[RMDB]
RNA sequence: GGGAACGACUCGAGUAGAGUCGAAAAAGGCAGCUUCCCGGCUUUAAAGCUACGGACGAUGCAAACGUAGCAGGCAUCGAAUUUUCGGCCCUUCGAAAAGCUGAGAUGAGCUCAGCAAGGGAAUCAAGUACCCUAUUGAAUUCGUUCAAUAGGGUACAAAAGAAACAACAACAACAAC
Reactivity to DMS in 0.01 (KOAc 150mM, MgCl2 10mM, bicine 150mM(pH8.5), 24C), signal-to-noise 6, nucleotides 027 to 126: a070g010g010c040a060g010c060u010u000c010c010c020g010g010c030u000u010u000a080a090a100g010c010u000a020c030g010g020a120c070g010a070u000g020c110a050a100a170c030g020u000a010g010c010a100g010g000c040a060u000c030g040a080a130u000u000u000u000c030g010g000c040c020c030u000u000c110g000a100a050a080a130g010c010u000g010a020g020a300u010g000a130g020c020u000c000a010g010c010a040a050g000g000g000a060a060u010c150a070a140
Reactivity to 2A3 in 0.01 (KOAc 150mM, MgCl2 10mM, bicine 150mM(pH8.5), 24C), signal-to-noise 4, nucleotides 027 to 126: a000g060g010c020a020g010c010u030u000c000c000c000g010g000c000u070u090u120a140a140a020g010c000u010a010c020g030g070a030c080g110a120u130g080c080a070a100a060c020g020u020a020g030c010a010g050g000c000a050u060c060g070a130a130u060u020u060u070c020g010g030c010c020c000u030u030c020g060a110a070a020a040g000c010u010g010a020g000a080u190g100a050g090c000u000c010a000g000c000a010a030g040g000g000a020a040u110c030a060a110
The record gives the reactivity of an RNA of 177 nucleotides to DMS and 2A3. For 2A3, 6,939 sequencing reads were counted. 2A3 is a SHAPE reagent: it acylates the 2'-hydroxyl of flexible nucleotides of all four kinds. The reactions ran in a buffer of 150 mM KOAc, 10 mM MgCl2 and 150 mM bicine (pH 8.5), at 24 C.